[RMDB]
RNA sequence: GGGAACGACUCGAGUAGAGUCGAAAAAGUUCAAAGGGAAGAGGCAUGAGGAGCACUUCCAGGUCUUCUUUGCCGAGCAGCAUCUGAUAUGGGACCUGUCCGUGUGCUUGGUGGGCUGGAUGCAAUAGCUAUUAUGUGAGUUCGCUCACAUAAUAGCAAAAGAAACAACAACAACAAC
Reactivity to 2A3 in 0.01 (KOAc 150mM, MgCl2 10mM, bicine 150mM(pH8.5), 24C), signal-to-noise 3, nucleotides 027 to 126: a000g070u090u090c060a060a050a010g040g000g010a050a040g020a060g080g000c020a030u140g030a050g080g000a010g030c040a020c050u140u000c050c020a010g010g040u000c000u140u020c000u060u110u070g040c000c030g030a030g000c040a030g000c000a020u040c040u060g060a070u050a120u290g010g040g000a040c020c040u040g050u040c050c020g120u120g010u020g080c010u040u040g040g020u070g020g020g020c030u040g020g010a040u060g000c000a010a050u050a120
Reactivity to DMS in 0.01 (KOAc 150mM, MgCl2 10mM, bicine 150mM(pH8.5), 24C), signal-to-noise 6, nucleotides 027 to 126: a090g000u000u010c080a070a100a120g010g010g010a100a070g010a150g000g010c060a030u010g020a100g000g000a040g020c080a050c040u000u000c120c070a070g000g000u000c020u000u010c060u000u000u000g020c030c030g000a080g020c100a070g010c040a040u000c080u010g000a090u010a060u010g010g000g010a050c080c040u000g010u010c070c130g020u000g010u000g000c050u000u010g010g020u010g000g000g010c100u010g010g010a050u000g010c090a070a090u000a090